[RMDB]
RNA sequence: GGGAACGACUCGAGUAGAGUCGAAAAAUGUAUGCAGAAUUUGUGACUUCUUACAAUGCAGCUGUCACAGCUGGCUUUACUUUCUGGGUAACUAAUAAACUUAACCCUUAUAACUUAUGGAAAAGUUUUUCAGCUCUCCAGUCUAUCGACAAUAUUGCUCCUAUUGCAGAUUCGUCUGCAAUAGGAGAAAAGAAACAACAACAACAAC
Reactivity to 2A3 in 0.01 (KOAc 150mM, MgCl2 10mM, bicine 150mM(pH8.5), 24C), signal-to-noise 1, nucleotides 027 to 156: a000u010g010u040a010u060g000c000a030g040a290a210u020u180u090g010u000g000a050c000u030u060c080u120u180a130c240a110a110u160g080c070a000g000c020u050g030u130c050a010c000a050g000c050u000g040g000c010u050u210u000a030c010u130u090u100c040u000g000g020g050u010a030a020c030u000a060a080u080a210a000a000c010u080u000a030a030c000c080c000u030u030a130u000a010a110c060u100u070a040u140g000g040a030a030a010a010g000u000u000u000u020u120c030a010g050c000u010c000u000c040c000a000g050u020c020u000a080u060c060g060a000c060a060a020u020a040u190u180g070